This 177-nucleotide RNA was probed chemically with DMS and 2A3. For DMS, 9,644 sequencing reads were counted. DMS adducts were read by reverse transcription with MarathonRT. High 2A3 reactivity points to a flexible backbone, as in loops and unpaired stretches. For 2A3 the reverse transcriptase was SuperScript II with manganese.

[RMDB]
RNA sequence: GGGAACGACUCGAGUAGAGUCGAAAAAGUGGGGAGGAAGACAGCAUGGGUAUAAGAGAACUGGCUCUGCAUUGCAUAGAUUUUCUACCUCACGUAUGAGCAAUGGAGGGUUUGCUUCUCAAAGUCCCCUAGCAACUAUCUUCGGAUAGUUGCUAGGAAAAGAAACAACAACAACAAC
Reactivity to DMS in 0.01 (KOAc 150mM, MgCl2 10mM, bicine 150mM(pH8.5), 24C), signal-to-noise 5, nucleotides 027 to 126: a140g010u030g020g000g000g000a120g010g000a070a090g010a110c190a090g010c080a080u020g000g000g000u000a060u020a140a080g010a010g000a010a030c010u010g000g000c000u000c010u000g000c010a020u010u000g000c010a160u050a100g000a170u010u020u040u000c040u010a060c080c090u000c130a070c160g010u010a010u020g000a090g010c010a010a010u010g000g000a020g020g000g000u000u000u010g000c170u000u000c010u000c010a060a090a130g020u050c050c030
Reactivity to 2A3 in 0.01 (KOAc 150mM, MgCl2 10mM, bicine 150mM(pH8.5), 24C), signal-to-noise 7, nucleotides 027 to 126: a000g100u090g010g010g010g000a120g020g030a050a020g050a040c030a010g090c070a150u090g060g000g000u090a080u040a240a060g010a000g000a000a010c020u030g020g000c000u000c010u050g060c000a010u000u020g000c010a040u080a180g100a270u090u100u090u080c050u090a140c010c040u100c040a050c040g000u050a140u180g120a070g000c000a000a000u010g010g100a100g000g010g010u000u010u020g050c050u010u000c000u000c020a000a010a010g070u060c000c010